[RMDB]
This 177-nucleotide RNA was probed chemically with DMS and 2A3. Reactivities are given for positions 27 through 126. DMS adducts were read by reverse transcription with MarathonRT.
RNA sequence: GGGAACGACUCGAGUAGAGUCGAAAAAUGCCAUAUACGCCAAUGAAUACCGCAACAAUGGUGAUGGGGCAAAGUGUCCCCAUUCGUUGAGUGCGGAGCUUGCGCCGCUGUGUUGGGUUUAUCAUUGCACUAUGGUAUUAUUCGUAAUACCAUAGUGAAAAGAAACAACAACAACAAC
Reactivity to DMS in 0.01 (KOAc 150mM, MgCl2 10mM, bicine 150mM(pH8.5), 24C), signal-to-noise 9, nucleotides 027 to 126: a070u010g000c020c020a090u010a080u010a090c140g000c040c030a040a040u010g010a070a090u010a130c020c010g000c000a020a060c010a020a020u000g020g040u010g010a010u000g010g000g000g020c010a080a080a120g030u020g010u020c000c000c000c010a010u000u000c020g020u000u000g000a160g010u000g000c030g000g000a070g010c030u000u000g000c090g010c020c050g010c050u000g010u000g000u000u000g010g000g000u000u000u000a080u020c060a100u000u000g010
Reactivity to 2A3 in 0.01 (KOAc 150mM, MgCl2 10mM, bicine 150mM(pH8.5), 24C), signal-to-noise 9, nucleotides 027 to 126: a000u070g060c000c010a030u080a020u030a160c070g020c030c020a020a030u070g040a070a050u090a200c000c010g010c010a010a010c000a010a040u080g140g010u150g090a020u010g000g000g000g000c030a070a300a120g170u140g110u250c000c000c000c000a000u030u030c010g020u010u040g060a130g140u020g010c000g000g000a000g000c010u040u070g000c040g000c020c010g000c030u040g010u020g020u110u050g020g020g000u030u050u030a140u070c040a040u010u110g020